An RNA of 177 nucleotides, treated with DMS and 2A3 and read out base by base.
Conditions: 150 mM KOAc, 10 mM MgCl2 and 150 mM bicine (pH 8.5), 24 C.
2A3 adducts were read by reverse transcription with SuperScript II with manganese.
Reactivities are rounded to 0.1 and cut off at 0 and 3.

RNA sequence: GGGAACGACUCGAGUAGAGUCGAAAAGUUAGAUGUCCCUGGCUUGGGGUCCCGCAGAGGCCUCAGGGCUGUGUGCACUCCCCUCCCCAGGCCACAUGACUACUCCGCAGAUGGGUUUAAUGACUGGGAGAUAAACCUUAUUCGUAAGGUUUAUCUCAAAAGAAACAACAACAACAAC
Reactivity to DMS in 0.01 (KOAc 150mM, MgCl2 10mM, bicine 150mM(pH8.5), 24C), signal-to-noise 9, nucleotides 027 to 126: g000u000u010a070g010a120u010g010u000c030c040c060u000g010g010c010u000u000g010g000g010g010u010c040c050c060g020c150a080g010a300g000g000c000c010u010c110a090g020g010g010c050u000g000u010g010u000g010c040a150c090u000c020c020c010c040u000c010c000c000c010a050g010g010c020c020a040c090a050u000g000a100c070u000a050c040u000c030c070g010c100a090g000a110u010g000g010g000u000u000u010a090a080u010g010a110c090u000g010g000
Reactivity to 2A3 in 0.01 (KOAc 150mM, MgCl2 10mM, bicine 150mM(pH8.5), 24C), signal-to-noise 2, nucleotides 027 to 126: g060u060u040a070g020a210u120g060u070c000c020c000u020g000g000c010u010u000g020g010g020g010u060c110c040c020g040c020a040g080a100g050g050c020c020u000c110a110g090g020g000c040u080g080u070g070u100g170c090a070c160u120c000c000c000c000u020c010c000c010c000a020g020g030c030c000a010c000a010u010g000a000c010u010a030c010u010c020c030g020c060a030g010a110u090g020g040g050u080u070u080a080a030u050g020a020c050u060g020g100